An RNA of 207 nucleotides, treated with DMS and 2A3 and read out base by base. DMS adducts were read by reverse transcription with MarathonRT. 2A3 adducts were read by reverse transcription with SuperScript II with manganese. It was measured as part of the RMDB library M2RFPK.
RNA sequence: GGGAACGACUCGAGUAGAGUCGAAAAAGCCAUACCAUUACGAUGGUAUGGCAAGUCCGUGACGGCGAUGGAUCCCGCCUGGCCGAGGCCGAACUGCCGAUCUGGCUGAUGGUUCCUGCCCCGUCAAAAAACGUAAAGCACUUCGGUGCUUUACGAAGUGGAACUUAAUGUUCGCAUUAAGUUCCACAAAAGAAACAACAACAACAAC
Reactivity to DMS in 0.01 (KOAc 150mM, MgCl2 10mM, bicine 150mM(pH8.5), 24C), signal-to-noise 1, nucleotides 027 to 156: a190g030c000c020a030u000a010c010c000a030u000u000a090c260g070a110u000g050g000u000a010u030g010g060c000a000a030g010u010c050c030g010u020g010a080c030g000g000c040g000a200u000g020g000a090u000c030c010c060g000c050c050u000g000g000c010c000g020a140g010g000c000c140g080a060a140c150u020g010c030c010g000a070u000c050u010g060g010c000u000g030a090u000g000g000u000u000c030c040u000g000c040c020c010c000g040u020c010a000a010a050a090a080a170c030g020u000a000a010a000g000c030a010c010u000u010c250g050g000u000g000c030u000u010u010a000c000g010a000a050
Reactivity to 2A3 in 0.01 (KOAc 150mM, MgCl2 10mM, bicine 150mM(pH8.5), 24C), signal-to-noise 3, nucleotides 027 to 156: a000g010c000c000a010u000a010c010c000a010u070u030a050c220g120a030u000g000g010u010a000u000g000g010c000a000a000g040u000c020c010g030u020g000a000c000g000g020c120g050a030u040g000g000a020u050c030c010c020g030c020c030u040g020g000c030c010g030a060g000g020c040c050g170a160a050c090u140g010c020c010g070a170u070c080u160g000g000c010u030g050a120u150g020g000u010u020c000c000u030g020c030c020c010c010g010u020c020a040a040a070a000a040a000c000g000u000a000a000a010g000c000a000c010u020u060c150g070g030u000g000c000u010u000u000a000c000g000a080a010